[RMDB]
RNA sequence: GGGAACGACUCGAGUAGAGUCGAAAAGAUAUGGAUAUCGAAGAACUAUGUACUUGUCGGAAACGAUUUCGAAGUCAUAGGGAGAUAUCCUAAGUCAAACGCUCUAAGUGUUCGCACUUAGAGCGAAUCUAAUGAUGAACUUCGGUUCAUCAUUAGAAAAAGAAACAACAACAACAAC
Reactivity to 2A3 in 0.01 (KOAc 150mM, MgCl2 10mM, bicine 150mM(pH8.5), 24C), signal-to-noise 7, nucleotides 027 to 126: g020a000u070a020u150g000g000a010u010a000u010c040g140a230a060g010a050a030c000u000a000u030g090u160a040c010u120u190g250u190c030g030g070a050a100a170c170g300a300u040u090u130c070g060a010a000g000u000c000a000u010a000g020g010g020a030g000a000u000a000u000c000c000u010a090a010g030u000c040a100a030a070c020g000c000u000c000u000a010a010g000u010g060u110u160c300g050c090a000c010u000u000a010g020a000g000c000g000a000a000
Reactivity to DMS in 0.01 (KOAc 150mM, MgCl2 10mM, bicine 150mM(pH8.5), 24C), signal-to-noise 6, nucleotides 027 to 126: g000a020u000a300u010g000g000a010u000a010u000c010g000a140a180g000a110a190c000u000a000u000g010u010a020c010u000u010g010u010c020g010g000a060a080a210c170g000a130u000u000u010c100g010a030a030g020u000c010a010u000a010g000g000g000a080g000a020u000a000u000c000c000u000a020a080g010u010c030a100a110a250c020g010c000u000c000u000a000a000g010u000g010u000u000c240g010c010a010c000u000u000a000g000a010g010c010g000a000a020